[RMDB]
RNA sequence: GGGAACGACUCGAGUAGAGUCGAAAAGAUAUGGAAGUGGACGAGCAUCGAUCCAAGUACACUCAGUACUACAUCGGAAACGAUGUAGGAACUGUGUACUUGGGGAGCUCGGUACACUUCCUAAGUCCGGUAAUACCUUGUUCGCAAGGUAUUACCGAAAAGAAACAACAACAACAAC
Reactivity to DMS in 0.01 (KOAc 150mM, MgCl2 10mM, bicine 150mM(pH8.5), 24C), signal-to-noise 3, nucleotides 027 to 126: g010a110u010a300u000g010g000a030a020g070u000g000g000a210c030g000a020g010c010a300u030c180g000a050u020c010c000a010a020g010u000a010c000a030c080u010c090a050g000u000a150c000u000a000c000a000u000c000g020g000a130a140a240c010g000a010u000g000u000a000g000g010a100a090c180u000g010u000g030u000a020c000u000u000g010g000g000g000a010g020c000u000c020g000g020u000a060c000a010c000u010u000c000c000u000a010a100g000u010c010
Reactivity to 2A3 in 0.01 (KOAc 150mM, MgCl2 10mM, bicine 150mM(pH8.5), 24C), signal-to-noise 2, nucleotides 027 to 126: g000a030u110a050u150g000g010a010a000g010u000g000g040a010c010g030a010g000c030a130u300c060g040a020u000c010c010a020a000g010u000a010c020a010c040u110c060a030g020u000a010c000u000a000c000a000u000c000g000g020a030a050a050c010g020a000u000g020u000a000g040g000a020a000c010u020g000u000g000u030a010c010u000u000g000g000g010g020a010g000c000u000c030g000g000u060a010c000a000c000u000u000c000c000u000a030a020g030u000c030